This 177-nucleotide RNA was probed chemically with 2A3 and DMS. Source: RMDB library OK2TST, as collected in RNAgym. For DMS the reverse transcriptase was MarathonRT.
RNA sequence: GGGAACGACUCGAGUAGAGUCGAAAAAGCGUGUCGUGGUGAUAUUAAUGAACCCGGCCGUGAUUAAAGAAAGCUUGUUAGAAGCGUGAGAAAUGAUAGCAUACCCGCAUUUCCUGCUGCCUGGGUCGGAGCUGUAAAUUUUCGAAUUUACAGCUCCAAAAGAAACAACAACAACAAC
Reactivity to 2A3 in 0.01 (KOAc 150mM, MgCl2 10mM, bicine 150mM(pH8.5), 24C), signal-to-noise 2, nucleotides 027 to 126: a000g030c020g020u140g010u000c040g050u160g010g000u060g010a070u080a060u300u280a290a180u160g040a010a010c000c000c000g010g000c000c020g010u000g000a040u000u210a060a060a050g100a000a040a020g020c000u110u060g030u120u240a080g060a160a000g010c050g040u020g040a130g170a060a070a030u130g020a070u140a020g040c010a070u020a140c000c000c000g000c000a000u000u000u010c000c020u030g040c020u040g000c040c030u030g020g070g040u050c130
Reactivity to DMS in 0.01 (KOAc 150mM, MgCl2 10mM, bicine 150mM(pH8.5), 24C), signal-to-noise 2, nucleotides 027 to 126: a150g000c020g010u010g020u010c010g000u020g050g000u010g000a180u000a300u010u020a110a160u010g020a190a030c020c000c000g020g000c000c010g000u020g000a160u000u010a100a100a080g000a070a130a100g010c020u000u000g000u000u010a130g000a130a030g020c020g010u000g000a090g000a060a020a040u000g000a090u000a060g010c060a110u020a120c030c010c040g010c020a070u000u000u000c010c000u010g000c100u000g010c060c030u000g010g000g030u000c180